[RMDB]
RNA sequence: GGGAACGACUCGAGUAGAGUCGAAAAUUGAAGGUAAAACAGCCUGUGGGUGAAACACACCCACAGGGCCCAUUGGGCGCUAGAACUCUGGUAUCACGGUACCUUUGUGCGCCUGUUUUACCGAAGGGGAGUGACGAGUUCGCUCGUCACAAAAGAAACAACAACAACAAC
Reactivity to DMS in 0.01 (KOAc 150mM, MgCl2 10mM, bicine 150mM(pH8.5), 24C), signal-to-noise 5, nucleotides 027 to 129: u000u000g000a220a110g000g000u000a060a010a010a000c000a030g030c000c000u000g040u000g000g000g000u030g010a160a140a090c220a220c000a040c030c050c000a000c000a000g000g030g040c000c020c010a070u040u060g000g000g000c040g030c000u050a070g020a050a010c020u020c000u030g030g010u010a020u010c050a110c270g040g010u020a010c000c010u000u000u000g020u030g030c060g060c000c020u000g020u000u000u000u000a000c010c030g020a130a070g000g030g000g050a170
Reactivity to 2A3 in 0.01 (KOAc 150mM, MgCl2 10mM, bicine 150mM(pH8.5), 24C), signal-to-noise 4, nucleotides 027 to 129: u100u080g040a080a000g000g000u000a000a000a000a000c000a000g010c000c000u000g000u000g010g000g000u010g030a030a070a000c120a020c000a000c050c000c000a000c000a000g000g000g010c000c000c000a020u200u300g000g000g010c000g000c030u060a050g060a160a010c000u000c010u000g000g000u020a010u020c050a030c190g110g010u000a000c000c020u000u000u000g000u020g010c010g000c000c000u000g000u000u000u000u000a000c000c000g000a000a000g000g000g000g000a110

This 170-nucleotide RNA was probed chemically with DMS and 2A3. Source: RMDB library 15KLIB, as collected in RNAgym. The DMS profile rests on 28,870 reads. For 2A3, 17,857 sequencing reads were counted. For DMS the reverse transcriptase was MarathonRT. Conditions: 150 mM KOAc, 10 mM MgCl2 and 150 mM bicine (pH 8.5), 24 C.